Structure probing data (2A3 and DMS) for a 177-nucleotide construct. Conditions: 150 mM KOAc, 10 mM MgCl2 and 150 mM bicine (pH 8.5), 24 C. The DMS profile rests on 1,796 reads.
[RMDB]
RNA sequence: GGGAACGACUCGAGUAGAGUCGAAAAUUGUUUGUAGGCGCAGCACCAUUAAGAUUCACAUGGAAAUUGAUAAAUACCCUAAAUUAGGGUUUUGAUAUGUAUAUGAGAAUCUUGAUGAUGCUGCAUCGAUUAAGUCCAUGUUCGCAUGGACUUAAUCAAAAGAAACAACAACAACAAC
Reactivity to 2A3 in 0.01 (KOAc 150mM, MgCl2 10mM, bicine 150mM(pH8.5), 24C), signal-to-noise 2, nucleotides 027 to 126: u050u040g050u080u060u150g100u140a060g030g070c060g020c030a000g000c000a010c010c000a010u000u000a000a010g000a000u000u000c000a000c000a050u010g010g030a080a080a020u000u010g010a000u020a100a010a050u160a070c000c000c010u050a180a220a130u230u120a040g000g000g000u000u000u030u000g000a000u000a000u030g020u010a020u000a000u090g030a060g010a030a000u000c000u000u000g000a000u000g000a000u010g030c030u000g000c000a000u000c020
Reactivity to DMS in 0.01 (KOAc 150mM, MgCl2 10mM, bicine 150mM(pH8.5), 24C), signal-to-noise 2, nucleotides 027 to 126: u000u010g000u000u010u010g040u030a190g000g020c140g010c010a000g000c000a010c010c000a000u000u000a030a010g010a000u000u000c000a140c000a010u010g000g000a120a220a020u000u000g000a300u000a010a020a030u000a060c000c000c000u010a060a060a130u000u010a030g000g010g010u000u000u000u000g000a160u010a010u010g010u000a230u010a000u000g000a090g010a000a000u000c000u010u010g020a010u000g000a010u000g020c000u000g010c020a010u010c000